Overview:
Structure probing data (2A3 and DMS) for a 177-nucleotide construct. 2A3 is a SHAPE reagent: it acylates the 2'-hydroxyl of flexible nucleotides of all four kinds. For DMS the reverse transcriptase was MarathonRT. 2A3 adducts were read by reverse transcription with SuperScript II with manganese.

RNA sequence: GGGAACGACUCGAGUAGAGUCGAAAAUACGCGGACCCUGACGGGGGCAGGGACGGAGAGGACGGUCCGCCGGGACCCCGCGGACCUCACGGACCCGUGGGCAACCUGAUUGCGCUCCAGGGUCCCACCAAUUAGAAACCUUCGGGUUUCUAAUUGGAAAAGAAACAACAACAACAAC
Reactivity to 2A3 in 0.01 (KOAc 150mM, MgCl2 10mM, bicine 150mM(pH8.5), 24C), signal-to-noise 1, nucleotides 027 to 126: u180a040c080g030c100g060g000a020c000c000c020u020g070a080c070g000g000g000g040g000c020a010g000g000g070a020c020g020g030a100g040a030g120g020a020c090g040g060u000c000c010g000c060c030g070g030g040a140c090c110c010c090g000c000g010g000a000c000c010u010c060a060c010g020g080a040c010c000c020g040u060g010g010g060c020a070a050c010c010u040g020a180u020u170g050c160g030c010u010c010c000a010g010g020g000u000c030c000c000a010
Reactivity to DMS in 0.01 (KOAc 150mM, MgCl2 10mM, bicine 150mM(pH8.5), 24C), signal-to-noise 3, nucleotides 027 to 126: u000a140c180g000c110g020g010a040c020c000c010u000g000a110c150g010g000g000g010g040c020a080g000g010g020a070c030g000g000a100g020a170g000g000a090c210g000g020u000c000c030g030c100c100g000g000g000a160c170c080c020c120g020c020g010g000a070c020c000u000c120a050c080g000g000a140c160c000c020g000u010g020g010g010c180a080a180c020c020u000g020a110u020u000g000c020g000c020u000c040c000a040g020g000g010u000c000c020c050a060